[RMDB]
RNA sequence: GGGAACGACUCGAGUAGAGUCGAAAAAUUUUAGGGUCUACUACUGGAGGACUAGUCUUAAGACAGUGGGACAAAAGUUCUUGGGAUUUUCUCCCCUUAAUCAAUAUGCGCAUGUUGACUACCUAUGUGUAAGGCAGUCGAGAGAAGCAGAGAAGAAAUUAAUCCAUUUAUUCGUAAAUGGAUUAAUAAAAGAAACAACAACAACAAC
Reactivity to 2A3 in 0.01 (KOAc 150mM, MgCl2 10mM, bicine 150mM(pH8.5), 24C), signal-to-noise 3, nucleotides 027 to 156: a010u250u280u100u120a080g020g020g000u050c060u050a050c020u050a040c020u110g040g030a040g020g010a000c000u030a030g060u000c030u110u120a080a040g070a050c050a080g040u100g030g020g000a000c020a020a180a030a020g010u050u020c000u050u090g090g030g000a050u100u000u100u060c020u000c010c020c000c000u030u100a090a090u100c020a060a080u090a040u240g030c030g000c070a020u080g060u090u020g030a000c000u020a050c000c000u060a080u140g140u000g050u150a010a030g000g000c010a000g000u000c020g000a000g000a000g020a080a010g000c050a000g010a000g020a150a010g020a020a140
Reactivity to DMS in 0.01 (KOAc 150mM, MgCl2 10mM, bicine 150mM(pH8.5), 24C), signal-to-noise 2, nucleotides 027 to 156: a110u010u000u000u020a110g020g010g010u010c040u000a060c090u000a090c040u010g030g010a080g040g000a050c030u000a120g010u000c030u000u000a060a100g010a060c070a110g030u010g020g000g020a250c080a070a180a130a110g030u000u000c020u000u000g020g010g000a120u000u000u000u000c090u020c000c000c000c030u000u020a030a080u000c020a100a060u000a110u000g000c080g000c100a160u000g020u010u000g030a050c000u000a000c000c000u020a090u000g030u010g020u000a140a060g030g040c000a030g030u000c020g010a080g000a060g010a080a160g010c010a040g000a090g010a120a110g010a080a140